[RMDB]
RNA sequence: GGGAACGACUCGAGUAGAGUCGAAAAGAUAUGGAGGACGGUAGACAUGCGUCCUGAUCGGAAACGAUCAGACGCAACAGCUACCUGUCCUCCUAAGUCAAAGACCAAAGCCUUCGGGCUUUGGUCACAUUUUUGGGUACUUCGGUACCCAAAAAUGAAAAGAAACAACAACAACAAC
Reactivity to DMS in 0.01 (KOAc 150mM, MgCl2 10mM, bicine 150mM(pH8.5), 24C), signal-to-noise 1, nucleotides 027 to 126: g000a050u000a300u000g000g000a040g000g010a010c010g000g020u000a000g020a060c120a220u000g020c000g000u010c150c150u000g010a000u010c010g020g000a060a070a180c010g000a010u000c000a020g000a010c000g000c000a020a020c280a110g000c000u000a010c000c010u040g040u000c000c000u000c000c000u000a000a080g000u010c040a110a130a100g020a020c000c000a020a020a010g020c010c000u010u020c280g030g010g010c000u010u000u000g000g000u010c010a000

Structure probing data (DMS) for a 177-nucleotide construct. High DMS reactivity at an A or C suggests that its Watson-Crick edge is free. It was measured as part of the RMDB library TTRDES. The reactions ran in a buffer of 150 mM KOAc, 10 mM MgCl2 and 150 mM bicine (pH 8.5), at 24 C. The DMS profile rests on 1,313 reads.